[RMDB]
Record summary:
This 177-nucleotide RNA was probed chemically with 2A3 and DMS. The DMS profile rests on 3,142 reads. 2A3 adducts were read by reverse transcription with SuperScript II with manganese. Conditions: 150 mM KOAc, 10 mM MgCl2 and 150 mM bicine (pH 8.5), 24 C.
RNA sequence: GGGAACGACUCGAGUAGAGUCGAAAAGUGACACUGUCAAGGAAUUGCACAGUGUACACGUGGACAUCGCUGUAUUCUCCCGAUAGCGAUCACCAUCACAUAUUUUUCGACGUUAUCGUUGGAGACGAACGACUUCCUGAUUCGUCAGGAAGUCGUUAAAAGAAACAACAACAACAAC
Reactivity to 2A3 in 0.01 (KOAc 150mM, MgCl2 10mM, bicine 150mM(pH8.5), 24C), signal-to-noise 5, nucleotides 027 to 126: g030u010g010a000c000a000c000u010g000u010c000a000a050g150g120a300a300u090u040g000c090a020c010a020g000u000g040u080a090c010a010c030g010u070g050g000a050c030a090u080c090g030c110u050g030u110a100u090u080c030u010c020c010c030g040a020u060a040g010c000g080a080u080c030a020c050c020a080u300c040a060c150a180u290a230u100u140u050u260u270c070g050a020c040g010u070u080a060u070c030g050u130u100g010g040a000g040a030c020g030
Reactivity to DMS in 0.01 (KOAc 150mM, MgCl2 10mM, bicine 150mM(pH8.5), 24C), signal-to-noise 2, nucleotides 027 to 126: g000u010g000a060c030a000c000u000g000u010c020a010a000g000g080a170a110u000u000g000c150a010c000a000g000u010g010u000a050c040a010c070g000u020g000g000a150c300a050u000c020g000c010u000g000u020a110u000u020c070u000c000c010c000g000a020u000a010g040c000g000a070u000c180a180c070c090a000u040c080a120c250a030u020a020u040u000u030u010u000c090g000a040c030g010u000u000a010u000c050g010u000u010g000g000a040g020a100c300g000